[RMDB]
RNA sequence: GGGAACGACUCGAGUAGAGUCGAAAAGAGGUGUGGUGUCUGUCUGAGCAUGAAGCUGGUUAUUGGUGUUGCUUCUGCAGCUGCCAUUAGCCAUUGAUGAUCGCUCUUCUCUUCUUUCGGGAGAGUGGAAUGUUUGGUACUUCGGUACCAAACAUUCAAAAGAAACAACAACAACAAC
Reactivity to 2A3 in 0.01 (KOAc 150mM, MgCl2 10mM, bicine 150mM(pH8.5), 24C), signal-to-noise 2, nucleotides 027 to 126: g030a020g010g020u000g010u050g080g010u030g000u060c020u010g020u030c050u070g000a020g020c030a060u080g070a040a020g050c010u000g010g020u020u020a020u030u040g000g000u030g050u190u060g000c000u150u210c070u290g030c000a000g000c010u150g000c020c000a010u020u030a010g000c000c020a010u000u160g110a140u060g020a070u140c010g030c000u000c000u060u020c010u010c000u140u010c030u060u210u160c080g010g010g000a010g010a010g000u050g070
Reactivity to DMS in 0.01 (KOAc 150mM, MgCl2 10mM, bicine 150mM(pH8.5), 24C), signal-to-noise 1, nucleotides 027 to 126: g000a060g000g040u010g010u010g030g010u000g020u000c020u010g000u000c040u000g010a060g010c070a040u010g000a150a070g010c110u000g010g030u000u000a050u000u000g000g030u000g000u000u000g000c010u000u010c250u020g000c040a030g000c000u010g050c030c000a030u000u000a040g010c000c020a090u010u010g020a060u010g000a090u010c090g020c010u000c010u000u000c010u010c130u010u000c110u000u010u010c140g000g000g000a020g000a020g020u020g010
The record gives the reactivity of an RNA of 177 nucleotides to 2A3 and DMS. The 2A3 profile rests on 1,746 reads.